RNA sequence: GGGAACGACUCGAGUAGAGUCGAAAAUAAUCUGUCAUUGACACUUGGGAACCAACCAUUGGGAAAGUCUGUUGAUGUGACAGAAUUGACAAACAACUGCAGCGAAAGGUAAUCAUACACUUUAUUCAAAACGCGUUUAUUUCGAUAAACGCGUUUUAAAAGAAACAACAACAACAAC
Reactivity to DMS in 0.01 (KOAc 150mM, MgCl2 10mM, bicine 150mM(pH8.5), 24C), signal-to-noise 3, nucleotides 027 to 126: u020a070a100u010c010u020g020u000c000a010u000u010g030a300c300a060c030u020u060g010g030g000a190a130c070c050a060a180c220c180a090u010u020g000g000g030a030a050a110g000u040c020u040g050u000u020g000a180u000g070u010g020a000c010a000g000a030a060u030u000g000a070c170a090a070a070c210a010a040c050u040g000c020a040g010c040g040a040a060a020g010g010u000a050a120u040c150a040u000a070c110a060c030u010u020u010a140u030u060c110
Reactivity to 2A3 in 0.01 (KOAc 150mM, MgCl2 10mM, bicine 150mM(pH8.5), 24C), signal-to-noise 4, nucleotides 027 to 126: u220a030a080u000c000u000g000u000c020a010u010u040g040a050c000a000c020u100u140g060g060g110a080a110c020c030a070a080c060c030a240u100u140g050g000g040a110a120a010g100u020c080u050g030u020u030g020a080u100g060u030g030a000c000a000g040a020a070u020u030g010a050c040a050a170a000c000a060a020c010u080g070c090a040g040c000g100a150a000a000g070g030u110a090a000u120c050a030u140a080c040a060c070u120u150u140a160u070u070c020